Background:
Chemical mapping of a 207-nucleotide RNA with 2A3 and DMS.

RNA sequence: GGGAACGACUCGAGUAGAGUCGAAAAUACCGUCUUCUCCCCGACGGUUUCAAUCCAUAGCUUCACGUUGUGUAGCGUAGGUGGAAGGUAUCGUGUGGUGUAUAAACACCACAUAGUCUCUUAAGGGUCAAGCUGAUAAACUUCGGUUUAUCAGCAAGUAAAUGAGAACUUUCGAGUUCUCAUUUACAAAAGAAACAACAACAACAAC
Reactivity to 2A3 in 0.01 (KOAc 150mM, MgCl2 10mM, bicine 150mM(pH8.5), 24C), signal-to-noise 5, nucleotides 027 to 156: u090a000c000c000g020u000c010u110u010c040u120c020c010c010c020g010a010c010g000g020u000u020u070c040a040a050u010c010c010a050u040a090g000c000u040u060c020a030c060g300u280u230g020u090g010u030a020g020c040g080u090a080g010g120u010g030g030a050a040g070g030u100a050u200c070g000u020g000u010g020g010u000g050u030a090u070a240a210a020c000a000c000c000a000c000a000u000a000g020u000c010u000c010u100u100a060a070g040g010g000u090c060a070a050g000c010u000g000a000u000a000a000a000c000u030u070c150g020g000u000u000u000a000u010c000a000g000c000a000a010
Reactivity to DMS in 0.01 (KOAc 150mM, MgCl2 10mM, bicine 150mM(pH8.5), 24C), signal-to-noise 2, nucleotides 027 to 156: u010a030c010c000g020u000c010u000u000c070u010c030c010c010c200g010a060c000g030g000u000u000u000c060a090a150u010c020c030a100u000a160g010c020u000u000c020a050c010g010u000u000g010u010g020u000a060g010c010g020u010a070g020g040u010g030g000a080a080g010g000u000a050u000c060g020u000g050u000g020g030u020g100u010a170u010a130a140a100c010a010c010c000a010c000a010u000a040g020u000c040u020c020u000u000a100a080g000g000g060u010c050a100a180g010c000u000g010a020u000a000a010a010c000u000u010c280g040g020u000u000u000a010u010c000a020g090c000a020a050
The 2A3 profile rests on 4,985 reads.